[RMDB]
RNA sequence: GGGAACGACUCGAGUAGAGUCGAAAACCGCACUUCUUCGGAAGUGCGGAAAUACCGAGAUUGUAGCUCGGUAGAAGUACAUAACCCUUGGAAACAAGGGAAAAAGCGUGAGCUUCGGCUCACGCAACGUGUAGAGAGCGUUCGCGCUCUCUACACGAAAAGAAACAACAACAACAAC
Reactivity to DMS in 0.01 (KOAc 150mM, MgCl2 10mM, bicine 150mM(pH8.5), 24C), signal-to-noise 2, nucleotides 027 to 126: c030c000g000c010a040c000u000u010c010u000u010c170g000g010a000a000g010u010g020c000g000g020a010a050a120u000a000c000c000g000a050g000a110u000u010g030u030a110g030c000u000c000g020g000u000a000g000a070a130g050u020a090c170a150u000a100a150c000c000c010u020u010g000g020a140a110a190c020a000a010g000g020g000a000a020a050a150a060g000c000g020u000g000a020g020c020u000u020c270g000g010c000u000c000a000c060g020c000a020a000
Reactivity to 2A3 in 0.01 (KOAc 150mM, MgCl2 10mM, bicine 150mM(pH8.5), 24C), signal-to-noise 1, nucleotides 027 to 126: c000c020g000c000a010c000u000u000c000u020u070c120g090g000a000a020g010u000g000c000g000g000a010a010a000u010a000c000c030g000a010g030a040u210u300g160u300a020g110c000u010c000g030g000u000a010g020a090a020g070u080a050c020a090u130a110a130c020c000c000u020u000g000g020a010a070a050c000a000a000g000g000g060a010a010a010a030a020g000c010g000u010g000a010g010c000u020u080c180g080g020c020u000c000a000c020g020c000a000a010